[RMDB]
RNA sequence: GGGAACGACUCGAGUAGAGUCGAAAAUUAUAUAUCAGUUGAGCCUUCUGGUGAUGUUAUUGGCCACCCACAAGGUCCUGACCAAGCAUGGUUUGCAGUUGGACCUUGUGGUGAUGUGUCAGGGCACCCAUCAUUACCUGUUCGCGGGUAGUGGUGGAAAAGAAACAACAACAACAAC
Reactivity to DMS in 0.01 (KOAc 150mM, MgCl2 10mM, bicine 150mM(pH8.5), 24C), signal-to-noise 8, nucleotides 027 to 126: u030u060a060u030a090u030a060u040c110a060g010u010u010g010a120g020c120c060u010u010c050u010g000g020u010g010a100u020g020u010u010a080u030u000g000g010c000c010a040c010c000c000a020c010a000a020g000g010u000c010c010u040g030a030c040c070a090a110g010c050a060u020g020g010u020u020u020g020c040a080g000u010u010g000g000a010c000c000u000u000g010u000g000g020u010g010a040u000g010u050g020u000c020a050g000g000g010c040a090c130
Reactivity to 2A3 in 0.01 (KOAc 150mM, MgCl2 10mM, bicine 150mM(pH8.5), 24C), signal-to-noise 9, nucleotides 027 to 126: u050u020a060u030a050u030a030u210c070a030g050u050u060g070a020g050c030c010u080u070c050u090g030g070u070g080a230u050g090u110u070a240u150u040g000g010c000c000a000c010c000c000a000c000a000a000g000g000u000c000c030u080g040a050c020c020a120a040g080c020a080u150g190g120u180u130u120g050c040a050g010u060u030g000g000a000c000c000u000u000g000u000g000g020u000g000a020u000g050u010g000u000c010a000g000g010g010c010a020c010